[RMDB]
RNA sequence: GGGAACGACUCGAGUAGAGUCGAAAAAAAGCCGCACAGUUAUAGUUGCAAACGACGAUAACUACGCUCUAGCAGCUUAGGCUAGCUAGCCAUCUGACACAGGUCUCUCAAAUGGGCGGUGUAUACAGAUGGUCAUCUUACAUUUGAUAGCGAGGGACUAUCGAGACAAGUUCGCUUGUCUCGAUAGAAAAGAAACAACAACAACAAC
Reactivity to DMS in 0.01 (KOAc 150mM, MgCl2 10mM, bicine 150mM(pH8.5), 24C), signal-to-noise 2, nucleotides 027 to 156: a040a080a010g050c000c000g010c020a180c140a040g020u000u000a040u000a060g030u000u000g040c050a150a120a150c100g030a040c000g070a000u000a030a030c030u000a060c090g010c040u010c010u000a100g020c010a060g000c030u000u010a120g040g020c010u000a040g020c050u000a080g020c060c000a060u010c030u000g050a280c020a040c040a060g000g000u000c010u000c010u000c030a060a120a100u000g020g040g010c000g010g030u000g130u000a110u000a300c060a030g010a040u000g010g000u000c040a060u010c060u000u000a090c060a130u010u000u010g010a150u010a000g040c040g010a080g000g010g010a200
Reactivity to 2A3 in 0.01 (KOAc 150mM, MgCl2 10mM, bicine 150mM(pH8.5), 24C), signal-to-noise 3, nucleotides 027 to 156: a000a000a000g040c030c000g080c030a090c040a060g010u070u040a060u050a100g010u020u060g050c080a120a070a050c060g050a000c020g000a040u010a100a020c040u150a050c060g040c020u030c000u020a010g010c010a000g020c020u080u110a110g120g000c010u000a040g020c000u010a000g010c010c000a020u000c010u040g030a010c010a010c010a040g010g250u050c040u000c000u020c090a120a120a180u180g020g000g000c030g000g010u000g010u010a140u010a030c000a000g030a020u020g030g030u020c010a040u030c020u080u170a090c040a190u100u090u160g040a060u050a030g050c040g010a060g020g000g000a000
Conditions: 150 mM KOAc, 10 mM MgCl2 and 150 mM bicine (pH 8.5), 24 C.
An RNA of 207 nucleotides, treated with DMS and 2A3 and read out base by base.